Chemical mapping of a 177-nucleotide RNA with 2A3 and DMS. The reactions ran in a buffer of 150 mM KOAc, 10 mM MgCl2 and 150 mM bicine (pH 8.5), at 24 C. Values are in units of 0.01, from 0 to 300, in steps of 10. For DMS, 1,301 sequencing reads were counted.
RNA sequence: GGGAACGACUCGAGUAGAGUCGAAAAACAUUGGCCUUCGGGCCAAUGUACUGGAAAUAAAGCCGAAAGGCUACGCAUUCCUUAAUUGGCGAAAGCCUGCGAGAUUAUGUAAGUUCGCUUACAUAAAACGAUGCGUUAAUUUCGAUUAACGCAUCGUAAAAGAAACAACAACAACAAC
Reactivity to 2A3 in 0.01 (KOAc 150mM, MgCl2 10mM, bicine 150mM(pH8.5), 24C), signal-to-noise 2, nucleotides 027 to 126: a010c000a010u010u010g000g000c000c000u020u000c290g070g000g000c000c000a000a000u000g000u000a030c040u010g010g100a020a090a060u220a100a170a050g010c010c000g040a060a030a060g000g010c010u000a000c060g000c010a060u030u030c000c000u020u120a150a080u230u150g010g040c020g000a110a010a010g010c000c010u010g000c130g060a300g000a160u030u030a010u040g020u010a020a000g040u000u100c290g000c060u020u000a010c010a000u040a000a070a010
Reactivity to DMS in 0.01 (KOAc 150mM, MgCl2 10mM, bicine 150mM(pH8.5), 24C), signal-to-noise 2, nucleotides 027 to 126: a010c000a010u010u000g000g010c000c000u000u000c230g020g010g000c000c000a020a020u000g000u000a040c130u000g010g000a040a010a090u000a110a120a090g040c000c020g020a100a080a090g030g020c000u010a060c080g010c030a130u000u010c000c020u010u010a060a060u020u010g000g040c000g000a150a080a140g020c000c010u000g020c090g000a120g000a170u000u000a000u000g000u000a000a010g020u000u020c190g010c020u000u000a010c000a000u000a010a010a080